[RMDB]
RNA sequence: GGGAACGACUCGAGUAGAGUCGAAAACAAACUAUCACUUUCAGUUACAGAGAUCAGACAACAUUUUGUGUAAAUAUGAUGCCUCUUUCUGAGUCUGAAGACCACGUCGUACAUUAGGCACACUGGCUUGGUUAAUCUCUGCAUCACUUCCUGGUUACAUCGUGCACCCUUUCGAGGGUGCACGAUGAAAAGAAACAACAACAACAAC
Reactivity to 2A3 in 0.01 (KOAc 150mM, MgCl2 10mM, bicine 150mM(pH8.5), 24C), signal-to-noise 1, nucleotides 027 to 156: c010a000a140a020c070u090a040u300c100a080c130u060u070u070c090a090g000u010u040a070c010a010g030a010g000a020u010c010a010g030a010c040a100a040c010a150u130u090u050u080g160u010g060u140a100a170a080u140a160u160g060a020u040g050c050c020u070c030u080u140u030c060u080g030a030g060u000c000u110g120a150a010g020a110c000c000a060c010g030u000c010g010u080a080c020a060u120u090a070g030g060c040a000c020a010c100u000g000g000c000u000u100g000g010u090u020a060a050u000c000u000c000u090g010c010a010u090c040a010c020u040u040c000c000u010g080g000u040u180a000